An RNA of 177 nucleotides, treated with DMS and read out base by base.
DMS adducts were read by reverse transcription with MarathonRT.
It was measured as part of the RMDB library TTRINS.
The reactions ran in a buffer of 150 mM KOAc, 10 mM MgCl2 and 150 mM bicine (pH 8.5), at 24 C.
[RMDB]
RNA sequence: GGGAACGACUCGAGUAGAGUCGAAAAGAUAUGGAUGCGACAUGACGCGGAGAUGUGUCUAGCUCUCUAGGCUCGGAAACGAGCCUAGAGAGCUAGACACGGAAUUGCGCAUGCGCAUCCUAAGUCACAUUAGCUUACAGUUCGCUGUAAGCUAAUGAAAAGAAACAACAACAACAAC
Reactivity to DMS in 0.01 (KOAc 150mM, MgCl2 10mM, bicine 150mM(pH8.5), 24C), signal-to-noise 1, nucleotides 027 to 126: g020a070u000a300u010g000g020a010u000g010c000g000a180c010a010u000g010a210c010g050c010g030g020a080g020a060u000g030u020g010u000c000u010a020g050c010u020c000u000c000u020a020g020g020c020u000c000g000g020a130a130a250c000g000a040g020c000c000u000a000g020a020g040a000g070c020u010a000g040a010c010a000c000g000g000a110a170u000u000g000c010g030c000a000u000g020c020g000c000a010u000c010c000u000a010a100g000u000c040a250